[RMDB]
RNA sequence: GGGAACGACUCGAGUAGAGUCGAAAAUGAGCGACGUUCAAUUCUACGUGUCGGGCGAAGACGACGUAGUUUCUCAGGCGCUGAAAGAGGUAGUUGAGGGUGGUGGCGAUGUGCUCGCACACAAAGACCACCCUAGACGAUUCGUCGUCUAGGGUGGAAAAGAAACAACAACAACAAC
Reactivity to DMS in 0.01 (KOAc 150mM, MgCl2 10mM, bicine 150mM(pH8.5), 24C), signal-to-noise 4, nucleotides 027 to 126: u020g000a070g020c020g000a060c060g010u000u000c070a060a170u010u000c020u000a040c030g010u000g010u010c030g000g010g020c140g020a080a130g000a050c030g020a030c010g010u000a020g010u010u000u000c030u010c060a140g010g010c070g000c040u000g000a030a060a070g010a060g000g000u000a040g000u000u000g010a080g010g000g020u000g010g020u000g000g000c080g020a050u000g020u000g010c060u010c130g020c070a130c050a080c080a040a080a150g010a160
Reactivity to 2A3 in 0.01 (KOAc 150mM, MgCl2 10mM, bicine 150mM(pH8.5), 24C), signal-to-noise 2, nucleotides 027 to 126: u190g010a080g000c050g160a110c040g060u080u070c030a060a030u090u000c000u030a010c020g040u020g030u040c030g040g060g100c130g130a100a030g000a020c040g020a000c000g020u000a000g010u020u050u010c050u000c000a040g050g030c030g000c060u060g050a040a070a040g030a020g000g050u080a060g050u100u120g040a030g010g030g060u040g000g060u030g000g000c040g060a070u050g000u050g040c030u060c030g040c020a040c010a000c010a100a090a000g070a030